This 207-nucleotide RNA was probed chemically with 2A3. Values are in units of 0.01, from 0 to 300, in steps of 10. The 2A3 profile rests on 972 reads.

RNA sequence: GGGAACGACUCGAGUAGAGUCGAAAACGAUCUGUUCGCAGAUCGAGCUACGGAGACGUAGCAGAGCACGACAGAGCUCUGGGUCGUGCGAUACCGGAAAUAAGACCGGGUGCACGAGUGCUAGCACCCGGCAGAGCUCAAAGAAACAGCACUCGAAGAUGAGCGAUAUCUUCGGAUAUCGCUCAUCAAAAGAAACAACAACAACAAC
Reactivity to 2A3 in 0.01 (KOAc 150mM, MgCl2 10mM, bicine 150mM(pH8.5), 24C), signal-to-noise 1, nucleotides 027 to 156: c010g000a010u020c000u000g050u080u080c270g080c070a000g020a000u010c000g000a030g000c000u000a000c010g030g000a050g060a070c010g010u010a000g020c000a000g060a010g000c040a010c020g030a010c030a010g080a020g030c000u030c050u190g060g030g000u000c000g000u000g000c000g000a010u090a060c020c020g030g070a060a120a130u230a060a040g080a020c000c030g000g020g000u020g000c000a020c100g000a000g010u010g000c000u010a030g000c000a000c030c000c000g000g000c000a000g000a000g000c000u020c040a070a110a010g070a000a080a010c060a020g000c000a000c000u000c000g040a070a030
For 2A3 the reverse transcriptase was SuperScript II with manganese. The RNA was probed in 150 mM KOAc, 10 mM MgCl2 and 150 mM bicine (pH 8.5) at 24 C.